The record gives the reactivity of an RNA of 177 nucleotides to DMS and 2A3. For DMS the reverse transcriptase was MarathonRT. 2A3 adducts were read by reverse transcription with SuperScript II with manganese. Values cover nucleotides 27 to 126.
RNA sequence: GGGAACGACUCGAGUAGAGUCGAAAAGAAGUGUGUACUCACACCAGCCAGGAGGAAACAAGCCUGCCUGGGAGGACAGACGAUCAGCCCUGGCUGUCCCUCAGGAGCGGGGGGCCUCCAAGGCACAUACUAUUAUCUUUUUCGAAAGAUAAUAGUAAAAAGAAACAACAACAACAAC
Reactivity to DMS in 0.01 (KOAc 150mM, MgCl2 10mM, bicine 150mM(pH8.5), 24C), signal-to-noise 9, nucleotides 027 to 126: g010a100a100g020u000g010u010g010u020a110c220u020c020a030c010a060c020c170a100g000c010c010a250g000g000a020g000g000a100a080a090c110a110a100g000c020c020u010g000c020c000u000g000g000g000a090g020g000a010c000a010g000a070c080g000a100u020c130a070g000c090c050c030u010g000g000c000u000g000u000c000c000c000u000c000a020g000g000a050g000c070g000g010g010g000g000g010c010c000u000c010c010a080a070g010g000c000a100c140a120
Reactivity to 2A3 in 0.01 (KOAc 150mM, MgCl2 10mM, bicine 150mM(pH8.5), 24C), signal-to-noise 9, nucleotides 027 to 126: g130a090a050g010u010g000u000g020u140a130c070u100c130a010c000a020c030c010a010g010c010c000a010g010g010a010g000g030a070a200a150c070a110a050g230c000c010u020g010c010c000u000g020g000g000a240g000g000a000c000a010g020a030c040g050a120u150c090a030g060c020c020c010u020g040g010c000u000g000u000c000c000c000u000c010a040g030g030a070g060c100g010g000g000g000g020g010c000c000u000c000c000a040a100g010g000c010a010c010a060